[RMDB]
RNA sequence: GGGAACGACUCGAGUAGAGUCGAAAAUCGACAAGGAGGUGAAGAUAGACAGCUUUUACAUGCGCAUGGCGCUCAAGGUGCUGACUCUAAGCGACGACCUGGGUGUGUACCGCAACGACCGCAUCCACAAGGCGGUGAGCGCCAGCCGCCGGCGCGACUAUUAGAACGUGUUCGCACGUUCUAAUAGAAAAGAAACAACAACAACAAC
Reactivity to DMS in 0.01 (KOAc 150mM, MgCl2 10mM, bicine 150mM(pH8.5), 24C), signal-to-noise 2, nucleotides 027 to 156: u000c050g000a120c030a080a090g030g020a070g030g010u000g010a090a070g010a080u000a070g010a100c060a060g000c040u000u000u010u010a120c080a090u000g010c090g010c040a080u010g020g020c010g020c130u010c050a080a110g020g020u010g000c060u000g010a090c040u000c020u020a080a140g030c050g000a090c050g010a040c040c010u020g000g030g080u020g020u000g010u010a030c010c040g010c160a060a140c060g010a050c010c020g030c030a090u000c010c030a070c110a090a120g020g000c010g000g010u000g000a060g000c030g000c020c000a160g000c010c020g050c010c030g030g010c030g020c000g030a210
Reactivity to 2A3 in 0.01 (KOAc 150mM, MgCl2 10mM, bicine 150mM(pH8.5), 24C), signal-to-noise 5, nucleotides 027 to 156: u080c010g010a000c030a020a040g020g010a010g020g010u050g020a050a030g020a040u090a020g050a030c020a020g060c030u050u030u090u160a070c080a100u220g010c020g000c100a140u100g000g000c000g020c000u040c100a070a090g020g030u050g020c020u050g070a100c010u000c030u160a120a040g040c030g100a110c020g040a080c020c010u000g000g010g000u010g000u010g010u030a100c020c070g060c090a070a030c060g070a010c050c010g000c000a020u040c030c000a050c030a120a050g040g000c020g010g000u020g010a010g000c000g000c010c000a010g000c000c030g000c010c000g020g010c010g000c010g040a030
An RNA of 207 nucleotides, treated with DMS and 2A3 and read out base by base. The DMS profile rests on 4,233 reads. The RNA was probed in 150 mM KOAc, 10 mM MgCl2 and 150 mM bicine (pH 8.5) at 24 C.